Chemical mapping of a 177-nucleotide RNA with DMS and 2A3. For DMS the reverse transcriptase was MarathonRT. For 2A3, 8,143 sequencing reads were counted. The DMS profile rests on 5,449 reads.
[RMDB]
RNA sequence: GGGAACGACUCGAGUAGAGUCGAAAAUAAAAGGGGGCCAGAUGUCAUGUCUCUCAAGCCUAGGAGACACUAGACACUCUGGACUAUCGGUUACAGGAAACCCCCCCAAAAAUGUAUAGGCGAAAAACAUAAGUAAAUGAUUCGUCAUUUACUUAUGAAAAGAAACAACAACAACAAC
Reactivity to DMS in 0.01 (KOAc 150mM, MgCl2 10mM, bicine 150mM(pH8.5), 24C), signal-to-noise 5, nucleotides 027 to 126: u000a050a070a130a150g010g010g000g010g020c010c000a010g010a050u000g010u000c010a160u000g000u000c010u000c000u000c090a060a300g010c000c010u000a010g000g000a010g000a020c000a020c300u010a100g020a000c010a010c190u000c000u000g010g000a100c100u010a040u010c060g010g000u000u010a090c090a120g010g010a060a090a100c000c000c000c000c000c000c000a030a070a090a090a060u010g010u010a030u000a010g000g010c000g000a040a070a040a070a190
Reactivity to 2A3 in 0.01 (KOAc 150mM, MgCl2 10mM, bicine 150mM(pH8.5), 24C), signal-to-noise 2, nucleotides 027 to 126: u110a010a100a020a030g000g010g000g000g000c000c010a010g000a000u000g000u000c000a000u000g010u000c000u000c000u020c050a080a020g000c010c010u010a000g010g000a000g000a010c010a010c040u050a060g000a010c000a010c060u020c000u000g010g000a000c010u070a080u040c020g030g010u050u080a110c090a140g000g160a030a010a050c010c010c010c000c010c000c040a080a110a020a050a020u170g050u110a130u010a050g010g000c000g000a070a020a010a010a000